The record gives the reactivity of an RNA of 177 nucleotides to DMS and 2A3.
RNA sequence: GGGAACGACUCGAGUAGAGUCGAAAAUUAGCGGAGGAACUCUCUACUACCGUUCAUGCGCUGGCUCUGCAUACUUACACUAUUAAGGAGUGGGAAGGGUUGCAGGACACCGUCUUUGCCUCUCCUCCAAUAGAACCCGAUUCGUCGGGUUCUAUUGAAAAGAAACAACAACAACAAC
Reactivity to DMS in 0.01 (KOAc 150mM, MgCl2 10mM, bicine 150mM(pH8.5), 24C), signal-to-noise 5, nucleotides 027 to 126: u010u010a050g020c070g010g010a070g000g010a110a100c100u010c030u010c030u000a080c030u010a070c100c030g000u000u000c090a060u010g000c070g030c060u000g010g010c040u000c000u000g010c040a050u000a130c030u010u010a070c060a050c050u000a090u000u020a130a120g020g000a040g030u010g000g010g010a060a040g000g010g020u010u010g010c030a030g010g000a050c060a070c070c050g000u000c060u000u000u000g010c020c020u000c040u010c000c020u000c080
Reactivity to 2A3 in 0.01 (KOAc 150mM, MgCl2 10mM, bicine 150mM(pH8.5), 24C), signal-to-noise 4, nucleotides 027 to 126: u070u040a010g030c030g020g030a030g040g020a110a080c020u010c000u010c020u140a070c010u070a110c020c030g050u050u060c040a060u130g010c010g010c050u040g010g010c040u010c000u040g010c020a010u050a070c000u020u050a020c030a010c020u070a060u250u090a180a080g210g030a050g070u030g000g040g060a030a050g040g050g030u090u060g000c040a020g020g030a020c020a020c030c030g050u020c050u050u050u070g070c020c000u030c010u000c030c000u000c030
Record summary
The RNA was probed in 150 mM KOAc, 10 mM MgCl2 and 150 mM bicine (pH 8.5) at 24 C. For 2A3 the reverse transcriptase was SuperScript II with manganese.